[RMDB]
RNA sequence: GGGAACGACUCGAGUAGAGUCGAAAAUGGGCUACCAGUAAGCGAAAAAUGAUACAGGACGAAAAAAACAUAAUUCGAGAUUUUUCAGGAUGGAUUUUUUUAGGUAUCUAUCAAAACUAUUCUGAUGCAACGUAGAGCACGUUCGCGUGCUCUACAACUUUACCGGUAACUUCGGUUACCGGUAAAGAAAAGAAACAACAACAACAAC
Reactivity to 2A3 in 0.01 (KOAc 150mM, MgCl2 10mM, bicine 150mM(pH8.5), 24C), signal-to-noise 1, nucleotides 027 to 156: u040g030g000g000c030u040a030c010c020a010g090u080a040a010g020c030g060a100a050a030a000a030u110g000a030u060a070c010a020g030g030a000c000g100a050a040a000a040a010a050a030c070a070u190a110a080u080u040c040g010a030g030a300u120u080u090u040u040c010a020g000g000a000u000g060g060a100u070u000u020u010u000u000u040a040g000g060u200a050u170c030u010a020u010c020a000a030a000a000c010u010a000u040u020c010u000g010a000u030g000c040a060a020c040g000u000a000g000a000g020c010a000c010g020u020u040c150g000c000g070u010g000c000u010c000u000a000c000a000a000